[RMDB]
The record gives the reactivity of an RNA of 207 nucleotides to DMS. The reactions ran in a buffer of 150 mM KOAc, 10 mM MgCl2 and 150 mM bicine (pH 8.5), at 24 C. Values cover nucleotides 27 to 156. DMS adducts were read by reverse transcription with MarathonRT.

RNA sequence: GGGAACGACUCGAGUAGAGUCGAAAAUGUGUAUUACAGAGAAGUCUAUUAUUGAAACUCACAAGGUGAAAAAAUGUGGACCUGAUCAUAGUUGAGUGUGUCUGCCCCAUGCUUGCAUUUAUGAUAUUGGAAACAGGAAGGGUGAGAUUGGAAACAGAAAGUGCCAAAUAUUCGUAUUUGGCACUUUAAAAGAAACAACAACAACAAC
Reactivity to DMS in 0.01 (KOAc 150mM, MgCl2 10mM, bicine 150mM(pH8.5), 24C), signal-to-noise 1, nucleotides 027 to 156: u000g040u010g010u020a080u010u000a170c090a080g000a200g040a130a120g010u000c020u010a080u000u010a130u000u020g020a130a110a060c050u000c040a040c080a070a100g030g070u000g000a000a000a040a030a050a090u020g030u000g010g030a060c050c040u010g000a090u000c010a050u010a120g000u000u010g010a070g070u040g050u000g000u010c020u000g000c050c030c090c020a050u000g010c020u000u000g020c080a050u000u010u000a040u040g010a050u000a120u010u000g040g000a050a060a040c020a080g000g000a090a080g000g000g000u000g000a020g040a160u020u010g000g000a100a070a160c130a110g010